[RMDB]
The record gives the reactivity of an RNA of 177 nucleotides to DMS and 2A3. It was measured as part of the RMDB libraries RFM100 and RFMREP. DMS adducts were read by reverse transcription with MarathonRT. The reactions ran in a buffer of 150 mM KOAc, 10 mM MgCl2 and 150 mM bicine (pH 8.5), at 24 C.

RNA sequence: GGGAACGACUCGAGUAGAGUCGAAAAUCUGACCCCCGUCUAGGGGUGAAAGUCCAAUCGAGCCCGGGGAUAGCUGGUUCCCCCCGAGACAUACCGCAGUAUGACCCGUCCGGAGGUUGGCGGUGGGUUAUAGUAAUUCAUUCGUGAAUUACUAUAAAAAAGAAACAACAACAACAAC
Reactivity to DMS in 0.01 (KOAc 150mM, MgCl2 10mM, bicine 150mM(pH8.5), 24C), signal-to-noise 9, nucleotides 027 to 126: u020c030u000g010a300c300c000c000c010c040g010u030c160u060a140g010g010g000g010u000g010a070a080a060g010u010c050c050a070a080u010c060g010a110g010c030c010c030g010g000g000g000a090u020a060g010c060u010g010g010u000u000c020c010c000c010c030c000g010a100g000a090c060a090u020a040c020c070g000c060a150g000u020a060u030g000a070c010c000c010g000u020c050c030g000g010a140g000g010u000u010g010g010c040g000g010u000g010g000g010
Reactivity to 2A3 in 0.01 (KOAc 150mM, MgCl2 10mM, bicine 150mM(pH8.5), 24C), signal-to-noise 9, nucleotides 027 to 126: u020c010u020g070a050c000c000c010c010c010g090u120c210u250a100g000g000g010g010u010g020a070a020a000g040u030c020c010a020a070u080c050g050a030g050c010c020c000g020g000g000g010a070u080a090g070c070u090g070g000u030u030c000c000c000c000c010c000g050a040g010a050c030a030u120a040c000c020g040c030a020g060u130a100u190g050a050c010c010c010g090u130c030c020g080g030a070g060g030u020u030g030g000c010g010g010u030g020g010g000